Background
The record gives the reactivity of an RNA of 177 nucleotides to 2A3 and DMS. The reactions ran in a buffer of 150 mM KOAc, 10 mM MgCl2 and 150 mM bicine (pH 8.5), at 24 C. For 2A3 the reverse transcriptase was SuperScript II with manganese. DMS adducts were read by reverse transcription with MarathonRT. It was measured as part of the RMDB library OK1LIB.
RNA sequence: GGGAACGACUCGAGUAGAGUCGAAAAUGCCGGGUAUGAACCGAGAGAGGUGUCUAGACGCGGUGGCGGGGGCGCUUGGUGUGGCUAAGGACUGGAUUAGGAGAGAGAUGACGGGUGGGGGCGGUGGAGUAAGUUUUCCUUUCGAGGAAAACUUACUAAAAGAAACAACAACAACAAC
Reactivity to 2A3 in 0.01 (KOAc 150mM, MgCl2 10mM, bicine 150mM(pH8.5), 24C), signal-to-noise 2, nucleotides 027 to 126: u130g000c020c000g000g040g000u120a090u250g050a060a030c010c000g070a080g020a000g020a020g080g040u080g080u100c030u120a100g000a120c040g020c060g140g000u060g030g040c230g030g000g000g000g000c010g040c080u080u090g040g020u140g060u060g040g010c010u050a050a050g050g010a050c070u080g000g100a130u050u110a110g020g020a030g000a000g050a000g020a070u230g100a050c050g000g000g050u130g060g020g000g010g030c050g020g030u060g000g000
Reactivity to DMS in 0.01 (KOAc 150mM, MgCl2 10mM, bicine 150mM(pH8.5), 24C), signal-to-noise 2, nucleotides 027 to 126: u030g010c020c030g000g000g080u000a060u020g000a100a150c050c050g000a180g010a170g000a100g000g010u000g030u040c060u050a080g010a090c100g000c000g000g040u020g000g000c080g050g010g020g000g000c100g000c090u040u010g010g040u020g020u000g040g000c080u030a050a100g020g040a110c090u000g000g020a060u020u060a080g000g000a100g000a130g000a140g000a120u020g000a130c040g000g010g030u010g020g000g000g000g020c070g000g000u000g000g000